[RMDB]
Source information
Structure probing data (2A3 and DMS) for a 207-nucleotide construct. The DMS profile rests on 2,164 reads. The reactions ran in a buffer of 150 mM KOAc, 10 mM MgCl2 and 150 mM bicine (pH 8.5), at 24 C. The data come from the RNA Mapping Database (RMDB), library RNAMAK.
RNA sequence: GGGAACGACUCGAGUAGAGUCGAAAAGAGUUACUUCGGUAACUCAAAAACCGUAGGUCGAUACAGAGCGUUGAUCAUGGUAGAUGUUUCGAAAGAGAGUAAGUACCAUGGGAGCUCUUAAUCGACCUAAACGGAAAAAGCCUUCUUCGGAAGGCAACUCCCAUAAGAUCUUCGGAUCUUAUGGGAGAAAAGAAACAACAACAACAAC
Reactivity to 2A3 in 0.01 (KOAc 150mM, MgCl2 10mM, bicine 150mM(pH8.5), 24C), signal-to-noise 3, nucleotides 027 to 156: g000a010g000u000u020a010c000u030u100c200g000g020u020a000a010c010u030c030a060a000a000a110a040c000c000g010u010a000g000g010u000c000g000a000u020a040c090a050g000a010g000c010g120u210u010g000a000u000c000a000u000g020g000u020a020g050a230u140g100u140u150u030c040g080a090a170a110g190a040g000a020g030u110a140a030g060u000a040c000c010a000u010g000g000g000a010g000c010u000c000u020u010a000a000u000c010g020a000c000c000u000a000a000a000c000g000g010a050a100a000a110a000g010c020c000u020u030c000u020u120c260g110g000a000a000g000g000c000a000a010
Reactivity to DMS in 0.01 (KOAc 150mM, MgCl2 10mM, bicine 150mM(pH8.5), 24C), signal-to-noise 1, nucleotides 027 to 156: g010a150g020u000u000a000c010u000u000c300g090g000u000a010a000c000u030c000a000a060a080a100a080c040c000g040u000a010g060g000u000c020g010a060u010a170c300a040g020a000g020c010g040u000u020g000a080u000c010a040u010g050g030u000a040g020a190u000g000u000u000u030c020g030a110a090a260g010a130g010a120g040u000a090a170g010u000a020c000c000a010u020g000g020g010a140g060c000u000c000u030u000a070a070u000c000g020a020c000c000u000a000a010a080c010g000g010a010a060a090a060a150g040c000c000u000u000c020u000u020c300g030g000a040a000g000g040c000a020a050

For DMS the reverse transcriptase was MarathonRT.